[RMDB]
RNA sequence: GGGAACGACUCGAGUAGAGUCGAAAACCUGGUUUAGGGUUCCAGGCUAGCCCUAUCUAUCGGUCGAGAUGCGAGCGCUUAAGCUCAAAUUGAGUGGCUGAGUUAGUGGUGAGCGUAUCCCUAUGUUAAAACGGUAGCUGCUUCGGCAGCUACCGAACUGUAUUGAAAUGUUCGCAUUUCAAUACAGAAAAGAAACAACAACAACAAC
Reactivity to DMS in 0.01 (KOAc 150mM, MgCl2 10mM, bicine 150mM(pH8.5), 24C), signal-to-noise 2, nucleotides 027 to 156: c010c020u000g020g010u020u000u020a040g000g020g030u000u010c040c030a180g000g040c010u000a080g000c000c010c000u000a020u000c050u010a050u000c010g040g030u000c020g000a300g000a020u000g020c300g020a020g050c000g030c230u000u000a100a210g020c000u000c020a020a220a100u000u000g000a170g000u010g020g000c030u000g010a060g020u000u000a030g000u000g030g020u000g000a110g010c040g000u000a070u010c010c010c020u010a230u010g010u000u010a040a070a080a130c020g040g020u000a020g030c010u010g010c000u000u010c300g040g030c000a020g010c010u000a000c010c000g010a000a020
Reactivity to 2A3 in 0.01 (KOAc 150mM, MgCl2 10mM, bicine 150mM(pH8.5), 24C), signal-to-noise 5, nucleotides 027 to 156: c010c010u010g040g010u080u070u050a040g030g000g010u110u050c050c040a060g040g080c020u040a030g010c000c010c000u000a010u020c020u030a110u050c000g010g010u020c050g020a020g000a130u010g010c010g000a010g000c040g010c220u300u300a150a080g000c000u010c010a010a030a000u020u020g020a020g020u240g030g000c010u000g010a010g020u010u010a060g000u120g180g000u030g040a020g020c020g020u080a090u070c010c000c010u020a050u120g090u040u110a080a090a020a020c000g000g000u000a000g000c000u000g000c000u040u040c130g100g000c010a000g000c000u000a000c000c000g000a000a000